[RMDB]
RNA sequence: GGGAACGACUCGAGUAGAGUCGAAAAGUGUUCAGUGUGGGGGUGCACCGGUUUCGACAGGGCGGGCAAUGGUGAGCAGGCAACCCGAGAGGCGACGGACGUAAUCCGCGCAAAUCCACAAACGCCAGUGAAUACUAGUGUUCGCACUAGUAUUCACAAAAGAAACAACAACAACAAC
Reactivity to DMS in 0.01 (KOAc 150mM, MgCl2 10mM, bicine 150mM(pH8.5), 24C), signal-to-noise 1, nucleotides 027 to 126: g010u000g040u000u010c050a090g050u010g040u000g020g000g040g050g030u000g040c070a040c030c080g000g020u000u000u000c060g010a070c120a080g010g000g000c110g000g000g000c060a100a090u010g000g010u000g010a080g020c040a050g000g010c020a030a090c020c010c030g000a050g000a090g000g020c030g000a090c020g000g000a060c120g000u010a040a150u000c010c010g040c020g030c030a020a070a040u020c030c020a030c220a050a080a160c070g000c070c100a040

Background: An RNA of 177 nucleotides, treated with DMS and read out base by base. DMS adducts were read by reverse transcription with MarathonRT. The reactions ran in a buffer of 150 mM KOAc, 10 mM MgCl2 and 150 mM bicine (pH 8.5), at 24 C.